[RMDB]
RNA sequence: GGGAACGACUCGAGUAGAGUCGAAAACAGGCCAGCAUCCGGGAGGCCUCUGCGGGAACGCCAAGGUCGCCGUGGCUUCGCACGGGAGACUUGGGAUUCAUAGUAGGAGAUGAGUUCUACAUCGUCGGGCAACUUCUCCGUUCGCGGAGAAGUUGCCAAAAGAAACAACAACAACAAC
Reactivity to 2A3 in 0.01 (KOAc 150mM, MgCl2 10mM, bicine 150mM(pH8.5), 24C), signal-to-noise 1, nucleotides 027 to 126: c040a010g050g070c000c000a030g000c060a110u020c050c000g050g000g000a020g000g040c060c000u010c000u040g020c060g000g030g110a050a050c010g000c040c000a030a000g050g060u010c020g020c000c010g070u040g000g000c000u080u020c110g070c000a010c010g020g010g000a250g100a010c060u070u140g000g020g080a050u000u030c040a070u200a080g090u010a000g090g070a020g020a120u100g020a020g080u070u000c000u000a010c000a210u040c050g110u000c020g000